[RMDB]
RNA sequence: GGGAACGACUCGAGUAGAGUCGAAAAGAAAUCGAUUUCCAUUUAAUUGGCUCAUUUACAUUUUAAGAAAGUCGUAUCUAGGAGAAGGUCGCCUUAGAUAGACAUUGCCCCCGGUCUCCUGCCCACAUAAUUUAUGGCUGUUCGCAGCCAUAAAUUAAAAAGAAACAACAACAACAAC
Reactivity to DMS in 0.01 (KOAc 150mM, MgCl2 10mM, bicine 150mM(pH8.5), 24C), signal-to-noise 2, nucleotides 027 to 126: g010a050a140a110u000c060g000a100u000u000u000c000c010a130u000u000u000a090a090u000u010g010g010c220u010c060a080u000u010u020a060c080a080u010u000u010u020a060a120g010a070a100a050g000u000c010g030u010a060u000c010u000a030g010g010a100g030a080a070g000g000u010c080g020c050c030u010u010a050g020a070u010a040g010a030c030a100u010u000g000c020c000c030c020c000g010g010u000c020u000c010c020u000g010c030c000c020a080c200a080